[RMDB]
RNA sequence: GGGAACGACUCGAGUAGAGUCGAAAAGAUAUGGAUCUAAUUAUCGAAGAACAUCGCUACCCACCUCGGAAACGAGAGGCGAUGGGAGAUAAUGAGAUCCUAAGUCAAAGUGCCGUUCGCGGCACAAUCACGAAUUACUCUUCGGAGUAAUUCGUGAAAAAGAAACAACAACAACAAC
Reactivity to DMS in 0.01 (KOAc 150mM, MgCl2 10mM, bicine 150mM(pH8.5), 24C), signal-to-noise 2, nucleotides 027 to 126: g020a010u000a080u020g010g000a000u000c000u000a110a020u000u000a010u000c010g010a120a140g020a160a120c000a000u000c000g030c030u000a150c150c130c100a130c170c010u000c000g020g000a020a010a020c000g010a000g010a140g020g000c020g000a010u000g010g000g020a020g000a010u000a000a010u000g000a030g000a000u000c010c000u000a000a060g000u000c000a080a060a100g000u000g000c020c000g020u010u020c180g040c000g020g010c000a000c000a040a070
Reactivity to 2A3 in 0.01 (KOAc 150mM, MgCl2 10mM, bicine 150mM(pH8.5), 24C), signal-to-noise 1, nucleotides 027 to 126: g020a000u030a020u040g000g000a010u020c000u040a070a000u050u020a000u020c050g290a300a030g000a010a010c000a010u000c010g000c020u090a140c170c100c080a290c200c000u000c000g000g020a000a000a020c000g010a000g000a080g060g030c010g000a000u000g000g000g020a020g010a000u020a010a010u020g000a010g010a010u000c000c000u000a020a040g000u010c050a090a070a040g000u000g010c020c000g010u090u140c300g010c020g120g010c000a000c000a000a060

Source: RMDB library TTRDEL, as collected in RNAgym. This 177-nucleotide RNA was probed chemically with DMS and 2A3. 2A3 adducts were read by reverse transcription with SuperScript II with manganese. The DMS profile rests on 1,459 reads.